[RMDB]
RNA sequence: GGGAACGACUCGAGUAGAGUCGAAAAAGUUUAGAUUUCGAUCUAAACUAGACCUCUAAGAGGAUGACGAGUGACUACGACGCAUCUAGUAGAAUGCGCCCAGCUGUGAGCAGUUCGCUGCUCACAACGUCGAAAGGGAAUUCGUUCCCUUUCGACGAAAAGAAACAACAACAACAAC
Reactivity to DMS in 0.01 (KOAc 150mM, MgCl2 10mM, bicine 150mM(pH8.5), 24C), signal-to-noise 2, nucleotides 027 to 126: a010g010u000u000u000a010g010a010u000u000u010c200g000a030u000c000u000a000a000a010c000u000a080g000a130c030c010u000c060u000a110a120g000a080g000g030a060u000g010a080c030g010a210g000u010g010a160c120u010a070c080g010a130c080g020c010a000u000c010u000a130g010u000a040g000a040a020u000g010c050g000c010c000c100a130g000c080u000g010u000g000a010g010c000a010g030u000u010c260g040c000u000g010c000u000c000a000c000a030a040
Reactivity to 2A3 in 0.01 (KOAc 150mM, MgCl2 10mM, bicine 150mM(pH8.5), 24C), signal-to-noise 2, nucleotides 027 to 126: a000g020u000u000u000a000g000a000u050u030u140c220g030a010u000c000u000a010a010a000c000u010a000g040a050c040c020u000c010u090a120a070g060a020g170g030a060u060g040a040c040g010a010g030u050g050a090c060u050a030c160g090a010c010g060c020a000u000c000u060a030g030u040a030g060a170a040u070g030c010g050c000c000c020a040g000c090u070g010u010g000a000g000c000a000g000u010u080c190g020c080u000g000c000u000c000a000c000a000a000

Conditions: 150 mM KOAc, 10 mM MgCl2 and 150 mM bicine (pH 8.5), 24 C. The record gives the reactivity of an RNA of 177 nucleotides to DMS and 2A3. For 2A3, 2,407 sequencing reads were counted. For DMS, 1,686 sequencing reads were counted. Reactivities are given for positions 27 through 126. Source: RMDB library M2PK50, as collected in RNAgym. 2A3 adducts were read by reverse transcription with SuperScript II with manganese. For DMS the reverse transcriptase was MarathonRT.